[RMDB]
Structure probing data (DMS) for a 177-nucleotide construct. Reactivities are given for positions 27 through 126. The reactions ran in a buffer of 150 mM KOAc, 10 mM MgCl2 and 150 mM bicine (pH 8.5), at 24 C.

RNA sequence: GGGAACGACUCGAGUAGAGUCGAAAAUAACCAGGAGUUUGUUGUGACGUAAGUUUCGUCCUAAAAGGACUCAUCAGGUAGCCUAAUAGACUACGACUUACGCGGUAGGUCGUGAAUAAGCCCGGAGCUAAUUGGGGUAGUUCGCUACCCCAAUUAGAAAAGAAACAACAACAACAAC
Reactivity to DMS in 0.01 (KOAc 150mM, MgCl2 10mM, bicine 150mM(pH8.5), 24C), signal-to-noise 1, nucleotides 027 to 126: u010a150a110c000c000a180g030g020a150g010u000u020u010g000u020u020g010u010g000a100c070g010u020a060a180g020u000u000u000c030g010u000c020c000u000a060a040a110a190g000g000a040c060u000c060a060u010c060a090g010g000u000a010g000c020c040u000a100a160u000a090g030a070c080u000a010c000g000a020c000u010u000a010c000g000c210g020g050u010a040g000g000u000c010g030u000g000a020a050u000a100a100g000c000c000c020g010g000a050g000